Structure probing data (2A3 and DMS) for a 207-nucleotide construct. The data come from the RNA Mapping Database (RMDB), library RNAMAK. The RNA was probed in 150 mM KOAc, 10 mM MgCl2 and 150 mM bicine (pH 8.5) at 24 C. Reactivities are given for positions 27 through 156. 2A3 adducts were read by reverse transcription with SuperScript II with manganese.

RNA sequence: GGGAACGACUCGAGUAGAGUCGAAAAGACCUCGCUGGGCGAUUCGGGCGAUAGACAUGCUUUGUGCUGAAGCGCGCACGGCACUGAGCAACAGCUAUCGUCUCUAGCGUGAUCGCCUGUGCUGAAGCGCGCACGGCAACCGAAAGGUGCGUAGUAAUCUUUUCAGUUAGUUCGCUAACUGAAAAGAAAAAGAAACAACAACAACAAC
Reactivity to 2A3 in 0.01 (KOAc 150mM, MgCl2 10mM, bicine 150mM(pH8.5), 24C), signal-to-noise 2, nucleotides 027 to 156: g070a050c000c000u020c010g000c010u020g010g000g010c010g010a020u030u020c050g020g010g000c010g000a010u000a000g060a100c080a090u080g010c010u000u020u020g000u000g000c000u020g030a160a050g020c000g000c000g000c010a050c040g000g000c000a000c000u010g030a000g000c020a020a130c060a120g050c000u000a000u010c000g050u010c000u000c010u020a070g080c080g150u150g020a010u000c020g000c000c000u020g030u060g000c010u100g010a060a030g000c000g000c000g020c000a000c020g080g000c030a130a140c030c010g070a090a040a010g030g020u040g000c020g000u070a090g050u080a080a120
Reactivity to DMS in 0.01 (KOAc 150mM, MgCl2 10mM, bicine 150mM(pH8.5), 24C), signal-to-noise 2, nucleotides 027 to 156: g030a150c050c000u000c030g000c010u000g030g010g030c020g000a070u000u000c040g000g040g020c000g000a040u000a010g010a130c090a300u000g010c010u000u000u000g030u000g030c010u040g000a050a110g000c000g040c000g010c030a300c020g000g000c010a020c010u000g010a040g000c010a150a100c110a150g020c000u000a020u000c020g020u000c070u000c130u000a110g020c130g000u010g000a020u000c000g060c000c010u000g000u000g000c000u030g010a070a080g030c030g110c040g000c010a020c090g040g000c020a260a170c020c020g030a060a180a120g020g030u000g020c000g000u000a130g000u010a090a170